RNA sequence: GGGAACGACUCGAGUAGAGUCGAAAAACUGGCUUCGGCCAGUAAAAAACCGUAGGUUGUAGAACUACCAUCCGCACGAUUCAACGGUUUCGAAAGAGACCGCGCAUUUCGUGCGAUGGCUACAACCUAAACGGAAAAAGGCGGUUUCGACCGCCAACUAAUCAUUUCGGUUCGCCGAAAUGAUUAGAAAAGAAACAACAACAACAAC
Reactivity to 2A3 in 0.01 (KOAc 150mM, MgCl2 10mM, bicine 150mM(pH8.5), 24C), signal-to-noise 2, nucleotides 027 to 156: a000c000u000g020g030c000u050u070c250g200g000c050c020a030g000u030a000a060a000a000a000a000c030c000g010u020a040g000g000u010u000g010u000a030g010a160a060c120u140a080c300c010a010u080c100c130g020c000a000c000g010a010u050u060c060a030a090c010g000g020u010u010u010c040g080a150a050a070g000a020g000a000c000c000g000c030g000c010a090u050u040u040c000g010u000g000c000g000a000u000g010g020c000u020a000c000a000a000c000c000u000a000a020a000c000g000g140a020a060a040a040a080g010g000c000g000g010u040u090u190c190g080a010c000c000g000c000c000a000a000
Annotation:
Conditions: 150 mM KOAc, 10 mM MgCl2 and 150 mM bicine (pH 8.5), 24 C. An RNA of 207 nucleotides, treated with 2A3 and read out base by base.